Chemical mapping of a 177-nucleotide RNA with 2A3 and DMS.
RNA sequence: GGGAACGACUCGAGUAGAGUCGAAAAGAUAUGGAACCUCCUACCAUGGUCGAAGAACUCGGAAACGAGGGAGACUGGGUAGGAGGGUUCCUAAGUCAAAACGCACGUACGUUCGCGUACGUGCGAACAUGACGGUUACGUUCGCGUAACCGUCAUGAAAAGAAACAACAACAACAAC
Reactivity to 2A3 in 0.01 (KOAc 150mM, MgCl2 10mM, bicine 150mM(pH8.5), 24C), signal-to-noise 1, nucleotides 027 to 126: g020a030u090a040u180g000g000a000a000c000c000u000c010c000u000a030c000c020a300u220g060g000u040c030g160a300a020g050a110a000c010u000c010g010g080a080a100a050c000g020a000g000g020g000a020g000a000c010u070g030g030g000u040a010g000g000a010g000g010g000u000u010c000c000u000a070a000g100u010c070a060a000a090a090c030g000c000a000c000g000u000a000c000g030u050u090c300g000c000g140u000a010c000g000u030g000c000g000a000a000
Reactivity to DMS in 0.01 (KOAc 150mM, MgCl2 10mM, bicine 150mM(pH8.5), 24C), signal-to-noise 2, nucleotides 027 to 126: g000a060u010a300u000g010g010a000a060c010c000u000c000c000u000a020c000c000a070u030g010g040u000c010g000a090a140g040a150a170c000u000c000g000g010a080a060a210c010g000a010g010g000g000a060g010a040c000u010g000g000g010u010a020g010g000a000g000g000g000u000u030c000c000u000a010a090g020u000c050a060a050a080a180c020g010c000a010c010g020u010a000c000g010u000u010c190g000c010g010u000a000c010g000u000g010c020g000a010a030
The DMS profile rests on 1,904 reads. 2A3 adducts were read by reverse transcription with SuperScript II with manganese. DMS adducts were read by reverse transcription with MarathonRT.